[RMDB]
RNA sequence: GGGAACGACUCGAGUAGAGUCGAAAAUCUUAGGAGUUCGCUCCUAAGAAAAGGGCGAGGCCGUGCCAGGUCUUCGGAGCAAUACUCGGCCAGUCACUCAGAAUGCGCUACCCUUCGGGGUAGCGAAGGGUCAAUAUUAGUUCGCUAAUAUUGACCCAAAAGAAACAACAACAACAAC
Reactivity to DMS in 0.01 (KOAc 150mM, MgCl2 10mM, bicine 150mM(pH8.5), 24C), signal-to-noise 4, nucleotides 027 to 126: u000c010u000u010a010g000g000a010g010u000u010c290g020c000u020c000c010u010a000a010g000a010a040a090a080g000g010g010c010g000a120g010g010c010c010g020u000g000c090c080a300g010g010u000c020u000u000c130g040g000a090g020c030a070a080u020a100c040u000c030g010g020c000c010a150g010u000c010a070c040u000c050a160g000a140a120u010g000c020g000c010u000a010c000c000c000u000u010c170g010g030g010g000u000a000g010c010g010a010a030
Reactivity to 2A3 in 0.01 (KOAc 150mM, MgCl2 10mM, bicine 150mM(pH8.5), 24C), signal-to-noise 3, nucleotides 027 to 126: u000c000u010u000a010g010g010a010g000u040u090c110g100c050u000c000c000u000a000a000g000a010a030a000a010g030g000g010c000g020a190g020g000c010c020g010u010g060c050c060a060g050g040u010c000u040u040c150g040g040a040g080c020a000a030u050a140c010u010c010g000g020c010c010a010g040u030c000a030c050u040c010a060g130a220a120u230g060c020g010c010u020a010c010c020c000u020u030c220g070g000g000g000u010a000g000c000g000a000a000